[RMDB]
Chemical mapping of a 177-nucleotide RNA with 2A3 and DMS. High DMS reactivity at an A or C suggests that its Watson-Crick edge is free. DMS adducts were read by reverse transcription with MarathonRT. Reactivities are given for positions 27 through 126.
RNA sequence: GGGAACGACUCGAGUAGAGUCGAAAACAACUCUAUUUCAGCACGCUAGUGGGAUGACCUUGGAUAAGCCUGACAUGUCUGGUUGAAAGUCUUGUGUGUUUGAGAUUGGUCUGGGCUUGGUAUAUUGCCGUCAGGUAAAAUUCGUUUUACCUGACGGAAAAGAAACAACAACAACAAC
Reactivity to 2A3 in 0.01 (KOAc 150mM, MgCl2 10mM, bicine 150mM(pH8.5), 24C), signal-to-noise 3, nucleotides 027 to 126: c020a000a030c020u010c010u130a150u040u140u050c060a000g030c030a010c030g020c010u080a040g050u100g030g020g070a040u070g060a060c010c000u030u060g010g000a040u040a120a030g020c030c030u030g050a050c020a070u120g050u060c040u040g020g060u050u050g090a140a070a030g050u040c030u090u100g050u020g020u000g000u050u110u140g070a080g010a060u000u080g050g020u010c040u040g000g040g000c010u010u030g030g040u110a150u030a070u210u230g070
Reactivity to DMS in 0.01 (KOAc 150mM, MgCl2 10mM, bicine 150mM(pH8.5), 24C), signal-to-noise 5, nucleotides 027 to 126: c120a080a090c060u000c040u000a070u000u000u000c070a080g020c040a040c070g010c040u000a040g030u010g000g000g010a080u010g000a090c040c020u000u000g020g010a080u000a080a100g010c020c020u000g010a090c080a060u000g020u000c030u000g000g010u000u000g010a100a100a100g010u000c030u000u000g010u000g010u010g010u010u000u010g000a070g000a050u000u010g010g000u000c030u000g010g000g000c070u000u000g000g000u000a070u010a090u000u000g020
For DMS, 9,048 sequencing reads were counted.